[RMDB]
RNA sequence: GGGAACGACUCGAGUAGAGUCGAAAAGAUAUGGAUCGGAGGGAGGAGGCGUAUUCGGAAACGAAUACCCCUCCGAAGAACUCCGAGUCCUAAGUCACACUGUCACCCACUUCGGUGGGUGACAGAAGUGUGCGUAUCAGUUCGCUGAUACGCACACAAAAGAAACAACAACAACAAC
Reactivity to DMS in 0.01 (KOAc 150mM, MgCl2 10mM, bicine 150mM(pH8.5), 24C), signal-to-noise 1, nucleotides 027 to 126: g000a050u000a300u020g010g020a300u000c050g010g000a000g020g000g000a110g010g010a030g000g000c300g050u000a000u000u000c020g030g000a130a040a190c000g020a000a000u000a030c000c300c000c000u000c000c000g000a010a050g030a250a120c010u000c000c000g000a090g010u020c020c000u010a060a030g050u000c050a090c110a240c000u000g010u000c000a000c000c000c000a000c000u000u040c130g120g030u010g000g000g020u000g000a000c000a000g000a050a090